[RMDB]
RNA sequence: GGGAACGACUCGAGUAGAGUCGAAAAGAUAUGGACAAUCUUUGGGACGAGGCUCGAUUCGGAAACGAAUCGAAGCCGAUGAGUCCGAUUGUCCUAAGUCAAACCAGGAUCCUUCGGGAUCCUGGAACGUACGACUGAAGUUCGCUUCAGUCGUACGAAAAGAAACAACAACAACAAC
Reactivity to 2A3 in 0.01 (KOAc 150mM, MgCl2 10mM, bicine 150mM(pH8.5), 24C), signal-to-noise 2, nucleotides 027 to 126: g010a000u020a010u050g000g000a020c020a020a020u000c100u300u300u300g100g000g000a020c060g060a130g030g000c000u000c010g000a010u020u000c010g000g000a020a000a000c000g020a000a010u000c010g040a050a030g000c000c000g010a010u060g040a010g010u000c050c010g000a000u000u010g000u000c000c010u000a000a000g000u020c060a070a030a100c010c000a000g000g000a000u030c010c020u160u260c300g160g000g000a000u000c000c000u000g000g000a010a030
Reactivity to DMS in 0.01 (KOAc 150mM, MgCl2 10mM, bicine 150mM(pH8.5), 24C), signal-to-noise 1, nucleotides 027 to 126: g010a010u000a020u020g010g000a020c000a020a010u000c000u020u010u000g010g020g020a020c000g020a040g040g030c000u000c000g000a030u000u000c000g020g050a000a020a020c000g020a020a000u000c000g000a030a040g030c000c000g010a040u050g030a210g010u000c000c000g010a010u000u000g000u000c010c010u000a000a040g000u000c000a130a150a300c000c000a000g000g020a000u000c000c000u000u000c250g060g010g010a000u000c000c000u000g000g000a020a070

Annotation:
This 177-nucleotide RNA was probed chemically with 2A3 and DMS. The reactions ran in a buffer of 150 mM KOAc, 10 mM MgCl2 and 150 mM bicine (pH 8.5), at 24 C. For 2A3, 3,638 sequencing reads were counted.